Overview
The record gives the reactivity of an RNA of 177 nucleotides to 2A3 and DMS. The reactions ran in a buffer of 150 mM KOAc, 10 mM MgCl2 and 150 mM bicine (pH 8.5), at 24 C. 2A3 adducts were read by reverse transcription with SuperScript II with manganese. The 2A3 profile rests on 1,809 reads. Source: RMDB library OK1LIB, as collected in RNAgym.

RNA sequence: GGGAACGACUCGAGUAGAGUCGAAAACAAGGCGUCCACGCUCGAUAAAUACAAACGAAACGAGCGGUUGUGCUGCGGACGAAGGUAUUAGCCGCGGUGCAAGGACGGGGAUAAUACCUUCGACAAACAGCUAGCAUGCAUUCGUGCAUGCUAGCUGAAAAGAAACAACAACAACAAC
Reactivity to 2A3 in 0.01 (KOAc 150mM, MgCl2 10mM, bicine 150mM(pH8.5), 24C), signal-to-noise 3, nucleotides 027 to 126: c050a030a010g070g020c000g040u020c020c050a060c030g030c000u010c000g090a040u120a180a080a030u210a150c160a040a210a010c090g140a060a150a020c000g000a000g000c000g010g000u040u050g070u050g000c040u030g000c070g050g000a000c000g010a000a030g020g000u020a010u040u050a050g060c000c000g210c010g130g010u170g040c020a010a130g150g070a050c000g000g040g000g000a040u050a080a000u010a020c000c000u020u010c000g010a020c030a010a090a000
Reactivity to DMS in 0.01 (KOAc 150mM, MgCl2 10mM, bicine 150mM(pH8.5), 24C), signal-to-noise 2, nucleotides 027 to 126: c090a040a130g000g000c050g040u000c020c020a210c040g000c020u000c030g000a100u000a070a180a020u010a120c300a020a020a190c180g050a150a100a090c010g000a030g000c010g000g000u000u000g000u010g000c080u000g000c200g000g040a150c020g000a000a000g000g000u020a000u000u000a030g000c000c000g030c010g000g000u010g000c090a110a040g010g000a030c010g020g000g030g030a020u000a000a010u030a000c000c000u020u000c000g000a130c130a170a090a070